[RMDB]
RNA sequence: GGGAACGACUCGAGUAGAGUCGAAAAGGCUCAAUUUUUUGCCAGGUCUUUCGGUUAGUUUGCAAUCGGAGGCAGUGCAACUGCCAGAAGGAAGUUUCAUCACCUGCGGAAAGCGUUCGACUGACGGCAACCUAAAUAUAUUCGUAUAUUUAGGUUGAAAAGAAACAACAACAACAAC
Reactivity to 2A3 in 0.01 (KOAc 150mM, MgCl2 10mM, bicine 150mM(pH8.5), 24C), signal-to-noise 5, nucleotides 027 to 126: g040g000c010u010c080a080a100u040u060u080u070u190u130g030c040c020a060g000g110u020c000u010u050u080c020g010g030u040u060a050g040u060u190u220g070c060a040a060u070c040g060g020a010g060g000c040a020g020u030g060c030a080a090c020u030g020c030c020a080g060a070a010g050g020a050a040g020u040u070u050c030a070u060c010a030c020c010u060g010c020g030g040a060a030a030g030c020g020u030u050c040g030a050c040u050g010a020c020g040g020
Reactivity to DMS in 0.01 (KOAc 150mM, MgCl2 10mM, bicine 150mM(pH8.5), 24C), signal-to-noise 9, nucleotides 027 to 126: g010g010c030u000c070a080a020u000u000u000u000u010u010g010c070c030a140g010g010u000c010u000u000u010c030g010g010u000u000a060g010u000u000u010g020c080a050a080u000c040g010g010a100g000g010c040a080g010u010g010c080a040a060c060u000g000c020c010a090g010a090a090g010g000a050a070g010u000u000u000c050a060u000c080a090c040c030u000g010c060g010g000a050a060a090g000c040g010u000u000c040g010a120c050u000g000a070c090g010g010